[RMDB]
The record gives the reactivity of an RNA of 177 nucleotides to 2A3 and DMS.
RNA sequence: GGGAACGACUCGAGUAGAGUCGAAAAGCAAUGCAGCACCCAUAACUUUCGUGAUGAUGGUUCCAUAACUCUCAGUGGUGCGUUGGCAAGUAAACAUCGUGAAAUCGUGAAAUACCGAGCCGAUGCCAAAUUACGUGCCGUUCGCGGCACGUAAUUUAAAAGAAACAACAACAACAAC
Reactivity to 2A3 in 0.01 (KOAc 150mM, MgCl2 10mM, bicine 150mM(pH8.5), 24C), signal-to-noise 2, nucleotides 027 to 126: g030c030a040a000u170g050c000a030g000c000a000c000c060c000a130u090a110a200c040u090u300u230c120g100u000g080a040u090g030a000u090g000g160u050u000c050c010a070u050a120a060c020u010c000u000c120a030g000u020g050g130u090g000c120g000u000u130g150g010c000a020a000g000u090a000a170a000c000a000u000c010g010u070g300a160a120a160u020c000g000u010g050a070a000a000u110a020c160c000g000a010g120c000c000g000a000u000g010c080c000
Reactivity to DMS in 0.01 (KOAc 150mM, MgCl2 10mM, bicine 150mM(pH8.5), 24C), signal-to-noise 1, nucleotides 027 to 126: g020c020a150a090u020g010c010a050g000c030a120c010c060c130a110u030a070a100c070u030u000u000c050g000u000g000a110u000g000a030u000g070g000u010u000c070c090a050u060a090a120c170u050c030u000c030a010g030u000g000g030u000g030c000g000u010u010g000g060c010a180a030g000u000a050a020a160c000a000u000c030g000u030g000a140a030a050u080c060g000u000g010a150a100a150u050a130c110c030g020a040g020c000c000g010a060u000g020c110c070

For DMS, 1,349 sequencing reads were counted.
Reactivities are given for positions 27 through 126.
High 2A3 reactivity points to a flexible backbone, as in loops and unpaired stretches.
The RNA was probed in 150 mM KOAc, 10 mM MgCl2 and 150 mM bicine (pH 8.5) at 24 C.
DMS (dimethyl sulfate) methylates the pairing face of unpaired adenines and cytosines.